[RMDB]
An RNA of 177 nucleotides, treated with DMS and read out base by base.
Values cover nucleotides 27 to 126.
The reactions ran in a buffer of 150 mM KOAc, 10 mM MgCl2 and 150 mM bicine (pH 8.5), at 24 C.
Reactivities are rounded to 0.1 and cut off at 0 and 3.
RNA sequence: GGGAACGACUCGAGUAGAGUCGAAAAUCUUCAGUUGGAGCGUUAAUACAAAUAUGUGUAAAUCAUGCCUUAUUACUGAGUUUCACAACUGGGGUGUGCAACUGAUGUGUCUGUAUAUGUGUAGAGAAUGAGGUCGGAUAUUCGUAUCCGACCUCAUAAAAGAAACAACAACAACAAC
Reactivity to DMS in 0.01 (KOAc 150mM, MgCl2 10mM, bicine 150mM(pH8.5), 24C), signal-to-noise 1, nucleotides 027 to 126: u000c030u000u000c050a030g010u000u030g020g020a150g000c020g020u020u000a070a090u000a030c160a060a110a170u000a130u020g030u000g000u010a050a090a100u000c080a020u000g000c090c030u000u000a050u000u000a140c140u010g010a080g000u000u010u000c050a120c030a040a020c140u000g040g000g010g040u000g030u000g020c070a050a030c070u000g020a020u000g000u000g000u000c030u000g000u000a060u020a070u020g010u000g030u000a110g010a150g000a100